[RMDB]
RNA sequence: GGGAACGACUCGAGUAGAGUCGAAAAAGCGACUGUGCACCUGUGGGGAGCGACACUUCACCCCCACAGUGAUCAAUGUGCUGAUCAGCGACGAGAUCAAGCCCAACCGCCAGAUCAAUUCUCUGGACACGGCCGAGUUUAUGUCGUCCGACGAGGACGGUAACUCCGGUUUCGACCGGAGUUACCGAAAAGAAACAACAACAACAAC
Reactivity to 2A3 in 0.01 (KOAc 150mM, MgCl2 10mM, bicine 150mM(pH8.5), 24C), signal-to-noise 3, nucleotides 027 to 156: a010g070c040g050a050c030u030g010u050g060c020a010c010c000u010g010u000g000g020g020g010a100g090c090g130a080c040a040c170u190u140c040a100c000c000c000c000c000a010c000a020g000u030g010a040u100c080a040a200u090g040u080g030c030u050g060a170u010c050a030g050c010g090a040c110g020a080g010a070u050c030a060a030g040c020c010c010a000a070c060c060g030c010c010a030g020a040u120c110a020a120u300u070c050u040c000u050g070g000a030c050a040c120g000g000c010c030g060a050g000u080u190u060a130u110g100u020c020g020u000c010c010g010a100c110g010a080g070g020a010
Reactivity to DMS in 0.01 (KOAc 150mM, MgCl2 10mM, bicine 150mM(pH8.5), 24C), signal-to-noise 1, nucleotides 027 to 156: a040g000c020g020a090c050u010g060u010g050c000a080c140c050u010g000u000g010g020g040g020a180g000c000g000a100c290a060c160u040u000c030a250c070c000c000c000c000a040c040a010g000u000g010a060u020c100a020a110u000g090u000g010c070u010g010a060u010c010a090g000c040g000a150c040g000a180g010a040u000c050a090a110g010c030c000c030a050a150c000c010g030c000c020a080g000a030u000c040a110a160u010u000c300u000c010u000g010g000a130c100a130c000g150g040c000c040g000a040g020u010u020u000a060u010g000u020c010g000u000c000c000g010a140c020g000a080g000g010a220